[RMDB]
RNA sequence: GGGAACGACUCGAGUAGAGUCGAAAAUAAUAACACUGCCACGGCAGAUGAUUAAAAUUAGUGCAAAGAGCAGCCGACCGGCAAUGUCGGCUCUAUUAAUGCCGUUAUCAUGAACAACCAACGUAGAUGUACGUUGGAUCUACAGAGAUGUUCAUGAGGUGUGGAGUGGGUUCGCCCGCUCCGCGCCAAAAGAAACAACAACAACAAC
Reactivity to 2A3 in 0.01 (KOAc 150mM, MgCl2 10mM, bicine 150mM(pH8.5), 24C), signal-to-noise 5, nucleotides 027 to 156: u100a000a040u100a070a010c020a010c020u030g030c040c020a050c050g070g010c020a020g140a160u100g020a040u080u270a060a050a040a040u130u100a090g020u070g060c020a060a080a040g050a060g060c080a000g000c000c010g000a000c010c050g180g110c170a020a040u080g000u000c000g000g000c000u000c000u000a060u050u080a030a050u050g020c010c000g010u030u060a060u010c000a000u000g000a000a000c000a010a070c030c010a000a010c010g000u020a020g020a300u210g080u210a010c010g000u010u010g010g000a000u000c010u020a070c040a030g080a030g010a090u060g020u010u000c000a000u010g010a000
Reactivity to DMS in 0.01 (KOAc 150mM, MgCl2 10mM, bicine 150mM(pH8.5), 24C), signal-to-noise 3, nucleotides 027 to 156: u000a050a110u000a090a100c020a060c030u000g040c020c050a120c130g060g010c020a030g010a090u000g030a150u000u000a050a070a170a170u000u010a070g030u010g000c040a090a120a130g010a150g050c100a070g010c010c010g020a040c040c100g020g000c140a070a050u000g030u000c000g020g000c000u000c020u000a060u000u000a070a150u000g030c000c020g030u000u000a240u000c000a010u000g000a010a020c020a060a170c010c020a010a030c020g020u000a040g000a200u010g000u010a020c020g010u000u000g010g020a010u000c040u010a300c120a190g000a180g020a190u000g010u000u010c000a010u000g010a060
Conditions: 150 mM KOAc, 10 mM MgCl2 and 150 mM bicine (pH 8.5), 24 C. This 207-nucleotide RNA was probed chemically with 2A3 and DMS. DMS adducts were read by reverse transcription with MarathonRT. 2A3 adducts were read by reverse transcription with SuperScript II with manganese. Reactivities are given for positions 27 through 156. For DMS, 5,772 sequencing reads were counted.